[RMDB]
RNA sequence: GGGAACGACUCGAGUAGAGUCGAAAAAGCACUUUUUGAAUUGUUUAUAUCGAGGGUGACACUUCAGGCCGAUUGUUAUAGUUGUUUGGUUUGUGGCCUGGUGGCUGAAACAGCGGUGUGUUAUGGCCAAUAUUAAUAAUUUCGAUUAUUAAUAUUGAAAAGAAACAACAACAACAAC
Reactivity to 2A3 in 0.01 (KOAc 150mM, MgCl2 10mM, bicine 150mM(pH8.5), 24C), signal-to-noise 1, nucleotides 027 to 126: a000g100c100a110c050u110u070u080u030u200g100a150a090u070u030g060u110u300u160a130u040a000u040c040g000a000g010g050g000u020g070a020c000a000c020u000u070c010a000g000g000c030c080g000a050u000u060g090u000u070a120u150a180g010u000u030g040u000u120u100g040g010u010u030u120g040u030g020g000c050c040u010g000g040u010g010g000c010u000g020a110a000a000c010a000g000c000g000g040u000g030u010g020u040u010a050u040g030g000c000
Reactivity to DMS in 0.01 (KOAc 150mM, MgCl2 10mM, bicine 150mM(pH8.5), 24C), signal-to-noise 4, nucleotides 027 to 126: a090g020c050a030c030u000u010u020u020u020g010a070a120u010u010g000u020u020u030a060u020a090u010c030g000a030g000g010g030u000g000a090c050a070c050u010u010c050a060g010g000c000c010g000a100u010u020g020u000u000a070u020a150g000u000u000g010u000u000u020g010g020u010u020u010g020u020g000g010c010c010u020g000g020u010g010g010c020u000g000a070a030a030c070a070g020c040g000g020u010g000u010g000u000u010a070u010g010g020c180
The record gives the reactivity of an RNA of 177 nucleotides to 2A3 and DMS. For 2A3 the reverse transcriptase was SuperScript II with manganese. The 2A3 profile rests on 454 reads. High DMS reactivity at an A or C suggests that its Watson-Crick edge is free.